[RMDB]
RNA sequence: GGGAACGACUCGAGUAGAGUCGAAAAGAUAUGGAGCGUGUAGACAUGUCCAGGGAUCGGAAACGAUCUAUUGGGACAACAGCUACUCGCUCCUAAGUCAAAAGGUUAGUUCUUCGGAACUAACCAACUCUAGAUUCACGUUCGCGUGAAUCUAGAGAAAAGAAACAACAACAACAAC
Reactivity to 2A3 in 0.01 (KOAc 150mM, MgCl2 10mM, bicine 150mM(pH8.5), 24C), signal-to-noise 2, nucleotides 027 to 126: g000a000u020a010u040g020g000a000g000c020g010u000g010u000a020g050a060c150a300u300g000u000c020c020a020g060g000g000a030u000c000g000g010a010a000a020c000g010a020u000c010u100a300u060u300g300g020g020a030c060a190a060c070a230g000c030u000a010c000u000c010g000c000u000c000c000u000a020a000g000u000c010a020a070a100a110g000g000u000u010a010g010u010u000c000u060u060c300g100g000a000a000c000u010a010a000c000c000a000a000
Reactivity to DMS in 0.01 (KOAc 150mM, MgCl2 10mM, bicine 150mM(pH8.5), 24C), signal-to-noise 1, nucleotides 027 to 126: g030a010u000a030u010g000g000a010g020c000g020u000g000u000a000g010a040c050a300u040g010u000c000c000a100g010g010g010a010u000c000g000g020a000a010a100c010g000a010u000c010u000a030u010u010g010g000g000a000c010a080a070c250a130g020c040u000a010c000u000c010g010c000u000c000c000u000a000a020g000u000c020a090a060a140a080g010g000u000u000a000g010u000u000c000u000u010c240g030g010a020a000c000u000a000a000c000c020a010a050